Chemical mapping of a 177-nucleotide RNA with 2A3 and DMS. It was measured as part of the RMDB library VIROID. High 2A3 reactivity points to a flexible backbone, as in loops and unpaired stretches. DMS adducts were read by reverse transcription with MarathonRT. Reactivities are given for positions 27 through 126. The reactions ran in a buffer of 150 mM KOAc, 10 mM MgCl2 and 150 mM bicine (pH 8.5), at 24 C. For 2A3 the reverse transcriptase was SuperScript II with manganese.
[RMDB]
RNA sequence: GGGAACGACUCGAGUAGAGUCGAAAACACCUCCAGAGGACCCCUUCAGCGAACAGAAGACUCUCUUCCCGGUGGGAGGAAGCCCAUAGCGAUGGGGGGAGAUGCUAGGAGUUAGGGGAGACCGAAGCGUUCUAAUAUGCUUCGGCAUAUUAGAACGAAAAGAAACAACAACAACAAC
Reactivity to 2A3 in 0.01 (KOAc 150mM, MgCl2 10mM, bicine 150mM(pH8.5), 24C), signal-to-noise 3, nucleotides 027 to 126: c020a050c000c010u040c050c040a050g020a170g180g040a300c010c000c040c000u080u100c080a020g030c010g060a110a040c030a040g140a180a020g050a140c030u010c000u000c000u060u020c000c000c000g060g030u100g000g030g000a060g060g060a020a020g110c020c010c020a030u090a030g140c120g120a090u210g000g010g000g010g030g010a010g000a020u130g000c010u010a070g000g050a090g030u050u030a020g020g030g020g010a070g070a020c020c010g010a030a000g040
Reactivity to DMS in 0.01 (KOAc 150mM, MgCl2 10mM, bicine 150mM(pH8.5), 24C), signal-to-noise 3, nucleotides 027 to 126: c100a230c040c000u010c030c040a110g000a160g000g010a230c040c010c030c000u000u000c100a050g010c020g000a180a100c080a080g020a160a070g000a060c040u000c040u000c020u000u010c010c000c000g000g020u000g020g000g010a090g000g010a080a080g010c020c000c040a080u000a110g000c070g000a070u000g000g000g020g000g000g000a050g000a070u010g030c010u000a090g000g010a220g010u000u000a050g010g000g010g000a110g010a100c020c010g000a090a090g000